[RMDB]
RNA sequence: GGGAACGACUCGAGUAGAGUCGAAAAGUGUCGGUCAUCGUUAGCUCACUGCCAAGUUUUCCGGUGAUGGGAUAGGCAGCCAACGCGACCGGUGCCGCAAAGGUCGCGAUGGCCGCCAUGGCCACGAUGGAGGAAAGAUCUUCGGAUCUUUCCUCCAAAAAGAAACAACAACAACAAC
Reactivity to DMS in 0.01 (KOAc 150mM, MgCl2 10mM, bicine 150mM(pH8.5), 24C), signal-to-noise 1, nucleotides 027 to 126: g010u000g000u000c080g070g020u000c020a010u000c140g000u010u000a080g000c000u020c040a060c030u020g020c020c030a050a110g040u000u000u010u020c060c070g020g030u000g010a130u020g000g000g000a030u000a110g010g000c030a010g030c000c010a010a030c020g000c040g010a040c000c000g030g010u000g020c050c020g000c040a120a220a300g000g000u010c000g000c000g000a100u000g000g020c000c040g020c000c010a000u000g000g000c010c010a070c070g000a170
An RNA of 177 nucleotides, treated with DMS and read out base by base.
For DMS, 1,133 sequencing reads were counted.
Source: RMDB library OK2TST, as collected in RNAgym.
Reactivities are given for positions 27 through 126.